[RMDB]
RNA sequence: GGGAACGACUCGAGUAGAGUCGAAAAGAGGAGUGCCAGUCGAAUCCGUGCAAAUACGGCGGCACAUGUGUCAACACCCACGGAUCUUACCAGUGAGUACCACGCUCCUUGACAUCGAUUAAGAAUAUACUAGGACUGAAUUCGUUCAGUCCUAGUAAAAAGAAACAACAACAACAAC
Reactivity to 2A3 in 0.01 (KOAc 150mM, MgCl2 10mM, bicine 150mM(pH8.5), 24C), signal-to-noise 3, nucleotides 027 to 126: g050a020g040g010a030g000u020g020c050c040a040g080u090c050g040a080a040u030c030c060g000u050g050c070a030a100a080u170a140c060g030g010c000g010g030c020a020c000a050u100g050u000g030u050c030a000a060c020a090c080c000c000a010c020g020g000a050u070c020u020u090a080c010c000a090g000u040g140a030g020u080a040c040c000a020c050g000c010u000c010c000u020u060g010a020c010a110u100c040g090a080u230u190a140a060g030a160a060u190a020
Reactivity to DMS in 0.01 (KOAc 150mM, MgCl2 10mM, bicine 150mM(pH8.5), 24C), signal-to-noise 6, nucleotides 027 to 126: g000a060g020g010a080g020u000g010c050c030a140g020u000c090g010a160a100u000c040c030g020u000g020c160a060a120a100u010a110c080g010g000c090g000g000c030a030c070a050u000g020u000g010u000c060a070a100c140a110c050c040c010a040c050g010g000a090u000c060u000u000a110c060c050a100g020u010g000a090g010u000a090c080c090a100c040g010c050u000c010c030u000u000g000a080c110a080u010c110g020a100u010u000a070a120g000a090a070u010a130
Conditions: 150 mM KOAc, 10 mM MgCl2 and 150 mM bicine (pH 8.5), 24 C. This 177-nucleotide RNA was probed chemically with 2A3 and DMS.